[RMDB]
RNA sequence: GGGAACGACUCGAGUAGAGUCGAAAACCAGCCUCUUAACAGCAUUGACAGCCUUUGUAUGCUGCUUGCAGGCACAAGGCUUAUAAGCACUGUGGAAUAGCGUUAUAUACCCAUAUACGGCUUGUUACCUAUUAGGAUGGUUCGCCAUCCUAAUAGGAAAAGAAACAACAACAACAAC
Reactivity to DMS in 0.01 (KOAc 150mM, MgCl2 10mM, bicine 150mM(pH8.5), 24C), signal-to-noise 7, nucleotides 027 to 126: c010c010a170g000c050c030u000c050u000u010a080a090c060a050g010c040a060u010u000g010a120c190a040g010c050c050u000u010u010g020u000a060u000g020c010u000g000c080u000u000g020c060a050g010g020c040a070c140a040a030g000g010c000u000u000a070u000a080a060g020c050a050c040u000g010u010g000g010a090a070u010a040g010c080g010u010u010a050u000a080u000a100c080c040c060a090u000a040u010a050c120g000g000c040u000u000g000u010u010a170
Reactivity to 2A3 in 0.01 (KOAc 150mM, MgCl2 10mM, bicine 150mM(pH8.5), 24C), signal-to-noise 6, nucleotides 027 to 126: c000c000a000g020c010c020u050c010u050u080a060a030c020a040g030c010a060u040u100g120a060c040a020g010c020c030u120u110u060g070u060a050u100g030c010u030g060c030u090u180g000c040a030g040g010c010a000c040a020a000g010g000c000u070u070a100u030a190a030g020c030a010c060u010g030u050g060g030a080a060u050a080g040c020g020u070u000a070u010a010u040a080c000c010c040a020u070a000u030a110c060g050g010c050u010u060g050u060u080a070